[RMDB]
RNA sequence: GGGAACGACUCGAGUAGAGUCGAAAAAGCUGAAUCGGCUGAAGAGGACCGCGUCAGAAGACUCCUGCAAGAGGAAGAAGCUGGAGGAAGAGCUGGAAGGCAUGAGGAGGUCGCUGAAGGAGCAAGCCCUUCACGUCAUAUUCGUAUGACGUGAAGGAAAAGAAACAACAACAACAAC
Reactivity to 2A3 in 0.01 (KOAc 150mM, MgCl2 10mM, bicine 150mM(pH8.5), 24C), signal-to-noise 2, nucleotides 027 to 126: a000g000c030u060g040a080a020u060c030g030g000c030u050g030a110a020g010a110g120g010a090c010c020g000c050g040u030c030a070g020a140a010g000a120c020u020c040c040u010g070c140a110a040g050a000g160g040a070a030g010a050a000g050c050u060g000g000a010g000g030a040a030g020a010g050c020u030g020g050a030a030g020g010c030a040u100g010a050g030g020a000g000g020u020c030g030c060u060g020a050a000g020g000a020g010c020a030a040g030c010
Reactivity to DMS in 0.01 (KOAc 150mM, MgCl2 10mM, bicine 150mM(pH8.5), 24C), signal-to-noise 2, nucleotides 027 to 126: a090g020c040u010g040a070a070u000c070g010g000c030u000g010a070a100g010a210g000g010a070c030c060g000c120g020u000c030a080g000a050a070g000a140c040u000c030c050u030g000c100a100a090g000a070g000g010a050a080g020a050a070g030c050u000g000g010a050g000g010a100a090g030a050g000c040u010g020g020a090a120g000g000c050a040u010g000a080g000g020a100g010g010u000c060g030c060u000g010a100a050g000g010a090g020c090a090a120g010c120
An RNA of 177 nucleotides, treated with 2A3 and DMS and read out base by base. For 2A3 the reverse transcriptase was SuperScript II with manganese. The DMS profile rests on 1,278 reads. Source: RMDB library OK2TRN, as collected in RNAgym. Reactivities are rounded to 0.1 and cut off at 0 and 3. Values cover nucleotides 27 to 126. For DMS the reverse transcriptase was MarathonRT.